[RMDB]
RNA sequence: GGGAACGACUCGAGUAGAGUCGAAAAAUGUUGACAUGGUAGUUCAGUUCUUAACCAAUGACUUGGGGAUGAUGCAAACAAUUACUGUCGUUGGGAUUUAGAGUGUAUUAGUCACGCAUGUAUGGGGAUCGCGAAUCACUUUCGAGUGAUUCGCGAUAAAAGAAACAACAACAACAAC
Reactivity to DMS in 0.01 (KOAc 150mM, MgCl2 10mM, bicine 150mM(pH8.5), 24C), signal-to-noise 1, nucleotides 027 to 126: a050u000g000u000u000g000a040c060a060u010g010g000u010a030g000u000u030c020a080g000u010u000c010u020u000a080a110c040c000a040a020u000g030a030c110u000u030g030g000g000g000a120u000g010a130u000g010c180a120a070a110c150a040a060u000u020a060c070u000g000u000c030g020u000u000g030g000g000a080u000u000u000a050g000a050g030u000g000u000a050u000u020a050g000u000c070a030c110g020c070a050u000g010u010a070u000g000g010g020g010
This 177-nucleotide RNA was probed chemically with DMS. DMS adducts were read by reverse transcription with MarathonRT. Reactivities are given for positions 27 through 126. The reactions ran in a buffer of 150 mM KOAc, 10 mM MgCl2 and 150 mM bicine (pH 8.5), at 24 C.